[RMDB]
RNA sequence: GGGAACGACUCGAGUAGAGUCGAAAAGCGAGCAGAAUAUGUGGUUGAUGGCCACUAGGCCGGUACCGGGGAACUGGCGGUUCCCGGCCGAUGAGCAUCGGCCCUGACGCGCGGCCGUAAGCUCCAGAAGUGCAGAAGUGUUCGCACUUCUGCACUUAAAAGAAACAACAACAACAAC
Reactivity to 2A3 in 0.01 (KOAc 150mM, MgCl2 10mM, bicine 150mM(pH8.5), 24C), signal-to-noise 3, nucleotides 027 to 126: g100c100g010a000g040c060a000g070a170a090u150a100u300g070u050g030g060u040u090g100a160u130g120g030c010c000a010c010u040a070g050g000c000c000g000g000u000a010c010c000g000g000g000g020a110a040c050u100g130g030c050g050g000u030u050c020c000c000g000g000c000c020g040a060u120g050a000g010c040a020u030c030g020g010c000c000c000u100g050a110c070g020c030g000c060g120g030c020c000g020u040a050a060g020c010u010c030c010a090g020
Reactivity to DMS in 0.01 (KOAc 150mM, MgCl2 10mM, bicine 150mM(pH8.5), 24C), signal-to-noise 2, nucleotides 027 to 126: g000c060g010a130g000c050a070g010a150a150u040a090u020g000u000g000g020u000u000g030a090u000g000g000c000c000a030c100u000a060g000g010c000c010g010g020u040a010c070c020g010g020g020g000a040a040c050u000g000g010c090g010g020u000u000c170c020c000g010g020c000c000g000a070u050g010a110g040c090a120u020c000g000g020c020c000c020u040g010a080c030g000c080g010c200g000g020c040c000g040u010a060a140g000c020u000c040c150a050g010